[RMDB]
RNA sequence: GGGAACGACUCGAGUAGAGUCGAAAAACAACACGCUUCGGCGUGUUGUCGACGGAGGAAGCUGAGGACGCGCUUGUGCCGCAGCACGGAAGCGCAGCGUAAAUCAGAGGUGAUUCGUCACCUCUAAGAUAUAUUUAGCGUUCGCGCUAAAUAUAUCAAAAGAAACAACAACAACAAC
Reactivity to DMS in 0.01 (KOAc 150mM, MgCl2 10mM, bicine 150mM(pH8.5), 24C), signal-to-noise 9, nucleotides 027 to 126: a020c000a010a010c000a000c000g010c000u000u010c190g030g020c000g030u000g010u000u000g010u000c050g010a090c090g000g010a080g010g000a110a100g010c030u000g000a080g010g010a180c130g010c040g010c040u000u010g020u000g010c010c170g020c130a090g010c030a060c040g010g010a100a050g010c020g020c010a040g000c070g010u010a050a100a100u010c130a020g010a010g010g010u000g000a050u000u000c160g020u000c010a040c010c000u000c010u000a010a060
Reactivity to 2A3 in 0.01 (KOAc 150mM, MgCl2 10mM, bicine 150mM(pH8.5), 24C), signal-to-noise 6, nucleotides 027 to 126: a000c000a000a000c010a000c010g010c000u030u070c210g150g000c000g000u000g000u000u000g000u000c010g030a030c040g040g050a040g050g040a090a020g020c040u040g030a030g050g050a050c060g010c000g010c050u060u110g030u050g040c010c050g090c060a040g030c020a010c020g050g100a070a010g000c010g000c030a020g030c040g080u140a050a070a060u130c060a020g000a000g010g020u010g010a030u030u070c130g050u010c060a000c010c000u000c010u010a020a000
Record summary: An RNA of 177 nucleotides, treated with DMS and 2A3 and read out base by base.